About this RNA: An RNA of 207 nucleotides, treated with DMS and 2A3 and read out base by base. The reactions ran in a buffer of 150 mM KOAc, 10 mM MgCl2 and 150 mM bicine (pH 8.5), at 24 C.
RNA sequence: GGGAACGACUCGAGUAGAGUCGAAAAGUCGAAAUGGAGUUCGCUCCAUUUCGACAAAAAACCUUUGUGUUGUGCGUCGAGGAUCCGCAGCCCAUUGGGCUGGGGGAGACGGCAACACUCUGGUAAAAACUACAGCUAGAUUCGUCUAGCUGUAGAAACAUGACAAAAGAUUCGUCUUUUGUCAUGUAAAAGAAACAACAACAACAAC
Reactivity to DMS in 0.01 (KOAc 150mM, MgCl2 10mM, bicine 150mM(pH8.5), 24C), signal-to-noise 1, nucleotides 027 to 156: g010u000c000g010a030a010a010u010g020g010a000g020u000u000c300g020c010u010c010c000a010u000u020u000c000g000a010c000a000a030a060a110a070a040c010c000u010u010u000g000u040g040u000u010g030u020g020c010g050u010c020g030a250g010g010a100u000c010c000g000c030a050g030c010c000c000a300u010u040g060g020g020c050u010g020g000g000g020g000a120g000a020c000g000g000c010a010a010c000a010c000u000c020u000g000g010u010a070a020a070a090a190c010u010a010c000a010g000c010u000a000g000a090u000u010c300g010u010c000u000a000g020c010u000g010u000a000g000a060a190
Reactivity to 2A3 in 0.01 (KOAc 150mM, MgCl2 10mM, bicine 150mM(pH8.5), 24C), signal-to-noise 3, nucleotides 027 to 156: g010u000c000g010a000a010a020u010g000g010a020g000u070u120c150g180c080u000c000c000a010u000u060u010c000g000a010c020a000a000a000a000a020a000c000c000u000u020u000g000u000g020u010u000g020u150g300c000g020u000c020g010a260g050g050a030u010c000c020g110c280a010g000c030c010c050a240u260u300g020g020g010c000u000g000g010g000g000g010a010g010a010c000g000g020c000a000a000c010a010c000u000c010u000g010g000u100a070a120a000a020a000c000u000a000c000a010g000c000u000a000g010a060u030u050c150g020u020c160u000a000g000c020u020g000u000a000g010a000a010